Record summary:
The record gives the reactivity of an RNA of 170 nucleotides to DMS and 2A3. The data come from the RNA Mapping Database (RMDB), library 15KLIB.
RNA sequence: GGGAACGACUCGAGUAGAGUCGAAAACCCAGGAAAGGGAACAGGGGGAAAUCGACCGGGUCCCGCAGAACCCGAUGGAGUCCCCCACCAUCCCUUCCGGAUGAAACUGGUCCCGAUAGGGGCACCCCAAGCCGACGUUUCGACGUCGGCAAAAGAAACAACAACAACAAC
Reactivity to DMS in 0.01 (KOAc 150mM, MgCl2 10mM, bicine 150mM(pH8.5), 24C), signal-to-noise 2, nucleotides 027 to 129: c080c000c000a000g010g020a050a060a020g000g000g080a010a170c300a200g010g070g040g000g020a000a040a160u070c000g040a040c080c020g000g000g000u010c020c050c180g060c150a090g000a000a000c030c000c030g050a030u020g030g050a000g000u020c050c000c010c070c050a000c220c000a030u010c000c030c060u020u000c010c010g000g000a090u090g030a030a150a000c100u040g060g030u030c000c080c000g050a200u080a080g030g010g010g050c090a070c000c000c000c000a210a220
Reactivity to 2A3 in 0.01 (KOAc 150mM, MgCl2 10mM, bicine 150mM(pH8.5), 24C), signal-to-noise 3, nucleotides 027 to 129: c000c000c000a000g000g000a050a070a060g040g000g000a100a010c140a210g010g040g000g000g030a000a030a160u030c020g080a060c050c000g000g030g000u030c020c020c000g000c000a070g050a030a000c010c010c000g000a000u040g030g000a020g060u010c010c010c020c000c000a010c000c010a040u040c050c000c000u000u010c000c000g000g010a040u080g090a000a050a080c110u110g010g000u040c030c000c040g040a050u180a210g000g000g000g000c000a010c010c010c000c000a050a050
For 2A3 the reverse transcriptase was SuperScript II with manganese. Conditions: 150 mM KOAc, 10 mM MgCl2 and 150 mM bicine (pH 8.5), 24 C. DMS adducts were read by reverse transcription with MarathonRT. For 2A3, 5,256 sequencing reads were counted.